Source information:
This 177-nucleotide RNA was probed chemically with DMS and 2A3. The reactions ran in a buffer of 150 mM KOAc, 10 mM MgCl2 and 150 mM bicine (pH 8.5), at 24 C. DMS adducts were read by reverse transcription with MarathonRT. Reactivities are given for positions 27 through 126. Source: RMDB library OK2TRN, as collected in RNAgym.
[RMDB]
RNA sequence: GGGAACGACUCGAGUAGAGUCGAAAACUGCCCGUGCCCCUCAUGAACGUCAUCAACGGGGGGAAGCACGCCGACAACCGGGUGGACUUCCAGGAGUUCAUGCUGGUGCCCGCGGGGGCGGGAAGCACCAGGAGUGCUAGUUCGCUAGCACUCCUGGAAAAGAAACAACAACAACAAC
Reactivity to DMS in 0.01 (KOAc 150mM, MgCl2 10mM, bicine 150mM(pH8.5), 24C), signal-to-noise 3, nucleotides 027 to 126: c110u000g020c000c020c000g060u000g020c020c020c000c000u000c020a100u040g010a020a130c170g020u010c220a080u010c040a100a070c150g000g030g010g010g010g000a080a100g010c180a070c020g020c040c030g010a090c100a060a080c090c010g000g000g020u000g020g000a080c030u000u000c020c130a100g000g000a110g010u000u000c010a000u000g030c050u000g010g010u000g010c030c030c120g020c050g000g000g020g000g030c020g000g000g010a090a080g010c150a120
Reactivity to 2A3 in 0.01 (KOAc 150mM, MgCl2 10mM, bicine 150mM(pH8.5), 24C), signal-to-noise 2, nucleotides 027 to 126: c030u080g040c030c020c010g010u050g120c050c020c000c000u010c020a020u080g030a090a050c050g190u090c100a150u030c050a070a120c060g000g000g020g010g020g000a000a000g080c020a020c040g120c020c040g120a140c050a120a050c030c010g020g020g000u000g000g030a030c000u020u020c010c020a100g190g010a020g040u020u000c020a020u110g170c030u040g000g050u040g030c000c000c010g030c010g000g030g000g080g010c040g000g000g000a050a000g060c040a060